The record gives the reactivity of an RNA of 177 nucleotides to DMS and 2A3. Conditions: 150 mM KOAc, 10 mM MgCl2 and 150 mM bicine (pH 8.5), 24 C. The data come from the RNA Mapping Database (RMDB), library TTRDEL. For 2A3 the reverse transcriptase was SuperScript II with manganese.
RNA sequence: GGGAACGACUCGAGUAGAGUCGAAAAGAUAUGGAGCGCAAUGGCUUUUGACGCGUACUCGGAAACGAGAAUACGCGAUAAGCCAGCGCUCCUAAGUCAAAGUGUGCCAUGUUCGCAUGGCACACAAGCUACACACGGUGUUCGCACCGUGUGUAGCAAAAGAAACAACAACAACAAC
Reactivity to DMS in 0.01 (KOAc 150mM, MgCl2 10mM, bicine 150mM(pH8.5), 24C), signal-to-noise 2, nucleotides 027 to 126: g000a020u000a300u020g000g000a000g010c000g010c000a230a100u010g030g020c000u010u020u020u000g020a200c040g000c000g010u000a020c000u000c000g010g020a060a110a100c000g010a040g010a080a180u000a000c000g020c010g010a120u000a020a030g020c000c000a070g000c000g030c000u000c000c000u000a000a060g000u020c020a110a180a090g000u000g010u010g020c000c000a030u000g020u000u020c150g020c020a020u000g000g000c050a010c000a000c000a030a070
Reactivity to 2A3 in 0.01 (KOAc 150mM, MgCl2 10mM, bicine 150mM(pH8.5), 24C), signal-to-noise 2, nucleotides 027 to 126: g030a020u030a060u150g010g010a010g000c020g010c090a240a300u100g010g000c000u090u110u190u300g180a170c000g020c000g010u010a010c000u000c030g000g020a040a030a010c030g000a010g020a130a150u050a010c000g000c000g050a080u050a070a010g020c000c010a000g030c000g000c000u000c000c000u000a000a000g010u000c060a000a060a130g000u000g000u000g000c000c000a000u040g020u000u020c090g000c190a000u000g020g000c010a020c000a000c000a000a010